Source: RMDB library RNAMAK, as collected in RNAgym. This 207-nucleotide RNA was probed chemically with DMS and 2A3. Values cover nucleotides 27 to 156. The RNA was probed in 150 mM KOAc, 10 mM MgCl2 and 150 mM bicine (pH 8.5) at 24 C.

[RMDB]
RNA sequence: GGGAACGACUCGAGUAGAGUCGAAAAUAGCAGUUCGCUGCUAGAUCUAACCUUUGUGCCUGCGACCAAGGGAGCGAAUGGUAGCCCAUUGGGCUACUCAUUCGCGAAGAACUUGGAGAACGCAGGCACUCUGGUGUUAUGCGUCAUUCGUGACGAAAUAUCAUUUACUGUUCGCAGUAAAUGAUAUAAAAGAAACAACAACAACAAC
Reactivity to DMS in 0.01 (KOAc 150mM, MgCl2 10mM, bicine 150mM(pH8.5), 24C), signal-to-noise 4, nucleotides 027 to 156: u000a050g020c030a070g030u000u010c200g070c010u000g000c000u000a070g010a160u000c080u000a130a110c010c010u000u000u020g030u000g010c000c000u000g000c000g040a240c000c000a030a020g010g000g000a300g030c000g010a000a020u000g030g010u000a010g030c000c000c010a300u000u010g080g030g030c010u000a010c020u000c020a000u010u000c000g030c000g000a040a120g010a100a170c000u000u000g000g010a100g010a100a150c020g020c010a030g010g010c000a000c020u000c020u000g000g000u000g000u000u000a060u000g020c000g030u000c010a150u000u010c300g000u000g030a050c010g000a070a140
Reactivity to 2A3 in 0.01 (KOAc 150mM, MgCl2 10mM, bicine 150mM(pH8.5), 24C), signal-to-noise 6, nucleotides 027 to 156: u050a000g000c000a010g020u070u160c210g080c120u010g000c000u010a030g010a090u050c090u120a030a050c000c000u010u010u020g000u000g010c000c000u000g020c010g060a250c030c000a000a010g010g000g000a020g000c000g000a020a000u000g010g010u010a000g000c010c010c040a140u150u300g000g000g000c000u000a000c000u000c010a000u000u000c000g000c000g000a000a010g020a000a000c000u000u010g050g000a100g120a120a010c010g000c000a000g010g000c000a000c000u000c000u000g000g010u030g040u090u190a190u250g090c020g010u010c010a050u070u120c200g100u070g020a010c010g000a180a020